Chemical mapping of a 177-nucleotide RNA with 2A3 and DMS. It was measured as part of the RMDB library TTRDEL. DMS adducts were read by reverse transcription with MarathonRT. The DMS profile rests on 1,002 reads. The RNA was probed in 150 mM KOAc, 10 mM MgCl2 and 150 mM bicine (pH 8.5) at 24 C.
RNA sequence: GGGAACGACUCGAGUAGAGUCGAAAAGAUAUGGAUGUAUACCAAGUGAUGACCUCGGUCGGAAACGACCGAGGCAAGCUUGAUACAUCCUAAGUCAAACGUAGCACAGCUUCGGCUGUGCUACGAACUUCUCGUUUUAGUUCGCUAAAACGAGAAGAAAAGAAACAACAACAACAAC
Reactivity to 2A3 in 0.01 (KOAc 150mM, MgCl2 10mM, bicine 150mM(pH8.5), 24C), signal-to-noise 1, nucleotides 027 to 126: g050a010u070a000u130g040g010a000u000g030u050a020u020a190c100c000a020a000g000u020g060a160u230g090a160c010c010u000c010g040g000u000c000g010g000a050a090a010c010g000a010c000c000g000a000g020g000c000a000a000g000c000u000u010g000a000u020a000c000a000u050c000c000u000a190a020g070u030c050a080a060a130c000g010u000a000g000c000a020c000a010g020c000u100u200c300g090g020c010u040g010u000g010c010u000a000c010g000a000a000
Reactivity to DMS in 0.01 (KOAc 150mM, MgCl2 10mM, bicine 150mM(pH8.5), 24C), signal-to-noise 1, nucleotides 027 to 126: g000a030u000a300u030g010g000a000u000g020u010a040u000a140c300c010a000a000g020u000g000a130u010g000a300c000c000u000c000g030g000u000c010g000g000a040a040a130c000g000a010c000c000g000a010g020g000c010a050a160g020c000u000u000g020a060u000a010c000a010u000c020c000u000a000a110g000u000c040a100a090a210c040g020u000a010g000c000a010c030a000g000c000u000u020c270g010g020c000u010g040u000g000c000u000a000c000g010a010a100